[RMDB]
RNA sequence: GGGAACGACUCGAGUAGAGUCGAAAAGAUAUGGACACACGCGAUAAGUCGCAGUCGGAAACGACUGGCGACUUUUGACGCAGUGUGUCCUAAGUCAAAGCCUCCCUAUCUUCGGAUAGGGAGGCAACAAUCUCUCCGACUUCGGUCGGAGAGAUUGAAAAGAAACAACAACAACAAC
Reactivity to DMS in 0.01 (KOAc 150mM, MgCl2 10mM, bicine 150mM(pH8.5), 24C), signal-to-noise 1, nucleotides 027 to 126: g030a010u000a300u020g010g020a010c000a000c000a000c000g020c010g010a160u010a030a060g010u000c000g010c010a030g010u000c030g000g020a110a050a170c000g010a000c000u000g030g040c000g000a010c000u000u000u000u000g020a160c060g000c010a130g040u000g010u000g000u010c000c000u000a020a060g000u010c030a170a130a130g000c000c010u010c000c000c000u000a000u000c010u000u040c160g030g000a020u000a000g030g000g000a000g000g000c010a000a010

Structure probing data (DMS) for a 177-nucleotide construct. For DMS, 881 sequencing reads were counted. Reactivities are given for positions 27 through 126. DMS adducts were read by reverse transcription with MarathonRT. Source: RMDB library TTRDEL, as collected in RNAgym.